[RMDB]
This 177-nucleotide RNA was probed chemically with 2A3 and DMS. The 2A3 profile rests on 2,519 reads. DMS adducts were read by reverse transcription with MarathonRT. Values cover nucleotides 27 to 126.

RNA sequence: GGGAACGACUCGAGUAGAGUCGAAAACAUCAUGCUCAGCCAAAGUACAGACCAGCUGUAUCGGCAGGAUCCGGGGCCACCUGGGAGGCGAACAUGGAGAAUGAUUUUUAGGCUCACAUGCCUGGCCGUAGCCAAUUAACUUCGGUUAAUUGGCUACAAAAGAAACAACAACAACAAC
Reactivity to 2A3 in 0.01 (KOAc 150mM, MgCl2 10mM, bicine 150mM(pH8.5), 24C), signal-to-noise 2, nucleotides 027 to 126: c020a020u080c000a030u070g010c020u010c050a040g000c010c030a070a100a030g070u060a070c010a050g040a130c040c030a040g140c010u020g030u100a070u060c010g060g000c020a020g000g030a060u040c020c010g000g030g010g020c020c010a030c040c010u030g010g060g000a040g020g030c000g020a020a020c030a050u080g070g010a020g040a050a070u080g110a140u070u070u020u030u140a040g000g020c010u030c030a150c020a070u190g040c000c000u000g040g000c030c050
Reactivity to DMS in 0.01 (KOAc 150mM, MgCl2 10mM, bicine 150mM(pH8.5), 24C), signal-to-noise 3, nucleotides 027 to 126: c140a050u020c080a050u010g000c020u010c020a110g040c010c050a100a090a140g010u000a020c080a040g010a150c130c170a090g010c020u010g010u000a060u000c090g010g020c040a050g010g000a060u000c050c050g040g000g000g000c080c100a060c050c020u000g010g040g000a110g020g010c010g010a040a060c060a050u000g010g030a110g010a130a050u010g020a080u000u000u000u010u010a100g010g010c020u000c130a070c180a080u010g020c010c010u000g000g000c090c090